[RMDB]
RNA sequence: GGGAACGACUCGAGUAGAGUCGAAAAGAUAUGGAAUUAAGAUGGGAGGCACUCGGAAACGAGUGGCCGAGGAUCAUCGAUGAUUCCUAAGUCAAAAGUACAUACUACGUUCGCGUAGUAUGUACAACAACCUAUUGUCCUUCGGGACAAUAGGUUGAAAAGAAACAACAACAACAAC
Reactivity to 2A3 in 0.01 (KOAc 150mM, MgCl2 10mM, bicine 150mM(pH8.5), 24C), signal-to-noise 1, nucleotides 027 to 126: g030a000u070a010u160g020g000a000a000u010u020a070a040g010a020u000g000g020g020a010g050g000c010a000c000u000c000g000g040a070a080a030c020g000a000g000u040g020g110c000c020g020a050g010g000a010u030c010a000u000c020g030a060u300g010a000u010u020c000c000u020a100a000g060u010c050a040a000a020a190g000u000a010c000a000u000a000c010u000a000c000g010u010u070c190g000c010g180u020a010g010u010a000u000g000u000a010c000a000a030
Reactivity to DMS in 0.01 (KOAc 150mM, MgCl2 10mM, bicine 150mM(pH8.5), 24C), signal-to-noise 2, nucleotides 027 to 126: g000a030u000a300u010g000g000a010a010u010u010a070a300g000a010u000g000g000g020a010g000g010c020a070c010u000c000g020g000a060a080a180c010g000a000g020u000g010g020c020c010g030a040g010g010a070u010c000a010u000c000g010a130u000g000a030u000u000c000c000u000a070a110g010u010c020a040a100a080a110g000u000a000c000a000u000a000c000u010a000c000g010u000u030c280g010c000g020u010a000g000u000a000u010g000u010a000c020a120a090